[RMDB]
RNA sequence: GGGAACGACUCGAGUAGAGUCGAAAAGUGCUUCUAGUAACACUGUUAAACCAGUAGCAUCUGGUUGGAAACGUAAUAAUUACGGCACUUAUUAUAAAUCAGAAAAUGCAACUUAUAGCAAUGGUAAUGGGCAUAUAGAAUUCGUUCUAUAUGCCCAAAAAGAAACAACAACAACAAC
Reactivity to 2A3 in 0.01 (KOAc 150mM, MgCl2 10mM, bicine 150mM(pH8.5), 24C), signal-to-noise 2, nucleotides 027 to 126: g020u000g000c010u040u080c130u180a000g000u020a010a000c000a000c100u000g010u000u000a030a140a000c000c000a000g000u060a000g050c080a000u140c000u000g000g050u050u050g030g070a270a190a040c020g000u000a030a150u080a170a030u070u000a010c000g000g000c000a000c000u000u000a000u010u010a160u020a090a200a000u080c050a080g090a080a080a050a010u000g040c000a030a030c140u180u100a050u270a280g000c040a000a090u030g120g000u050a130a050
Reactivity to DMS in 0.01 (KOAc 150mM, MgCl2 10mM, bicine 150mM(pH8.5), 24C), signal-to-noise 6, nucleotides 027 to 126: g010u000g010c020u000u000c170u020a100g000u030a080a070c110a050c050u000g020u000u010a060a070a080c100c080a020g000u000a120g000c120a080u000c000u000g000g010u000u000g010g010a080a080a080c110g030u010a070a060u010a090a080u010u030a030c070g000g000c030a060c100u000u000a070u020u020a080u020a060a040a070u020c070a060g000a080a060a070a110u000g010c030a120a060c120u010u030a130u010a070g000c040a040a040u000g010g000u010a080a120